[RMDB]
Source: RMDB library OK3TST, as collected in RNAgym. This 207-nucleotide RNA was probed chemically with 2A3 and DMS. As a SHAPE reagent, 2A3 marks flexible, mostly unpaired nucleotides at the ribose 2'-OH.
RNA sequence: GGGAACGACUCGAGUAGAGUCGAAAACGGCGACACGCGGGCGAUGCUCCGUAGGAUCAGGAGCUUCUCGGAGAUCGACAAGCAGGGCAUCAAUGCGGCACUGGCUGAGGGCGCGCGCGAGUCGACGCUGGAACGGUUCAAGCAGAGCAAAGGCCCGCAUUCUAUUGCUAUUCGUAGCAAUAGAAUGAAAAGAAACAACAACAACAAC
Reactivity to 2A3 in 0.01 (KOAc 150mM, MgCl2 10mM, bicine 150mM(pH8.5), 24C), signal-to-noise 4, nucleotides 027 to 156: c000g040g030c030g020a040c020a010c100g010c000g020g050g030c010g050a040u120g020c010u010c010c010g040u090a050g040g080a060u080c120a090g110g060a050g020c030u080u030c040u040c010g050g000a090g020a170u120c030g030a030c040a040a010g010c010a030g040g030g020c030a030u130c090a130a160u200g070c060g050g000c040a030c110u070g130g000c010u020g030a060g020g050g040c030g000c020g000c000g000c000g030a020g020u030c000g010a030c020g030c060u020g010g040a090a070c030g030g030u010u020c040a110a010g020c020a020g030a000g010c030a010a060a100g050g020c000c000c010g000
Reactivity to DMS in 0.01 (KOAc 150mM, MgCl2 10mM, bicine 150mM(pH8.5), 24C), signal-to-noise 2, nucleotides 027 to 156: c030g010g030c030g020a110c030a090c050g010c010g010g000g020c000g030a140u010g020c000u000c020c000g000u010a150g030g030a090u000c080a190g000g000a110g010c120u000u000c030u000c070g020g000a150g000a070u000c010g010a120c040a070a160g020c030a100g030g010g020c000a220u010c070a080a110u020g060c120g030g000c010a140c080u010g020g080c050u010g000a160g030g030g010c010g010c000g020c010g020c010g020a150g030u000c010g030a030c000g020c000u000g000g000a070a110c110g000g010u000u000c050a090a160g000c020a080g010a060g020c050a070a130a130g000g000c020c000c020g000

Notes: The reactions ran in a buffer of 150 mM KOAc, 10 mM MgCl2 and 150 mM bicine (pH 8.5), at 24 C. The 2A3 profile rests on 4,098 reads. Reactivities are rounded to 0.1 and cut off at 0 and 3.